[RMDB]
Annotation
Structure probing data (DMS and 2A3) for a 177-nucleotide construct. For DMS, 46,954 sequencing reads were counted.
RNA sequence: GGGAACGACUCGAGUAGAGUCGAAAACAUCGUUCAAACGGACGUUAUAUGCCAACCGUUUUUGGUUUCAACGCUGGGUCUACAUAUGCACAACAAUGCCCAGUGGUGACCUAGACCGGUGCGUUGACAUUUAUUAAUGGUUCGCCAUUAAUAAAUGAAAAGAAACAACAACAACAAC
Reactivity to DMS in 0.01 (KOAc 150mM, MgCl2 10mM, bicine 150mM(pH8.5), 24C), signal-to-noise 9, nucleotides 027 to 126: c090a070u010c020g010u000u000c030a070a110a140c270g000g000a030c030g010u010u010a080u000a080u010g010c050c080a100a050c020c020g010u000u000u000u000u000g010g010u000u000u000c020a020a050c010g010c000u000g000g000g010u000c120u000a070c190a080u000a100u010g010c130a080c190a070a090c110a060a080u000g000c020c010c010a030g010u000g000g010u000g010a040c100c030u000a030g000a010c050c010g010g010u000g010c060g010u000u000g010a180
Reactivity to 2A3 in 0.01 (KOAc 150mM, MgCl2 10mM, bicine 150mM(pH8.5), 24C), signal-to-noise 9, nucleotides 027 to 126: c020a050u070c010g010u030u020c050a250a200a150c140g020g010a000c010g010u070u080a190u020a030u220g070c040c040a060a030c020c020g000u000u010u000u020u050g050g000u040u140u100c020a030a010c010g000c010u010g000g000g030u030c050u100a050c060a100u250a090u260g120c090a050c010a220a090c020a110a110u110g010c000c000c000a000g000u000g000g000u000g000a000c000c000u000a000g000a010c000c020g020g020u030g010c020g030u020u050g030a030
Description
The RNA was probed in 150 mM KOAc, 10 mM MgCl2 and 150 mM bicine (pH 8.5) at 24 C.